[RMDB]
RNA sequence: GGGAACGACUCGAGUAGAGUCGAAAAGAGCUUUUUUUCGAAAAAGCUCCGGCGCAAUGCCUAAGUGUACACUUCACAAGGGUUUGUGGUGGUCAAUGGCAAUACCAGCAAUCUUCGGAUUGCUGAACAAUAUUACUACCUUCGGGUAGUAAUAUUGAAAAGAAACAACAACAACAAC
Reactivity to DMS in 0.01 (KOAc 150mM, MgCl2 10mM, bicine 150mM(pH8.5), 24C), signal-to-noise 8, nucleotides 027 to 126: g000a010g010c000u000u000u000u000u000u000u010c120g010a020a010a010a010a010g000c000u000c000c050g000g010c070g010c080a070a060u010g020c010c000u000a040a170g010u000g000u010a110c130a080c120u010u010c030a020c040a050a210g000g010g010u000u010u000g010u000g010g010u000g010g010u000c050a040a070u000g000g010c060a070a080u010a080c180c000a010g000c000a010a010u000c000u000u010c170g020g010a010u000u000g000c000u000g010a050a100
Reactivity to 2A3 in 0.01 (KOAc 150mM, MgCl2 10mM, bicine 150mM(pH8.5), 24C), signal-to-noise 6, nucleotides 027 to 126: g020a000g000c000u000u010u010u020u020u060u140c120g020a010a030a000a000a000g010c010u000c010c020g050g030c040g000c060a070a100u160g020c000c010u040a110a030g010u010g020u120a080c120a070c140u090u140c040a010c020a070a080g150g070g030u050u070u030g040u040g030g190u030g020g000u070c040a060a080u080g050g000c030a060a070u060a260c060c010a020g000c000a000a000u000c010u030u040c180g100g010a000u000u000g000c000u000g000a000a000
Background:
An RNA of 177 nucleotides, treated with DMS and 2A3 and read out base by base. Values cover nucleotides 27 to 126. For DMS the reverse transcriptase was MarathonRT.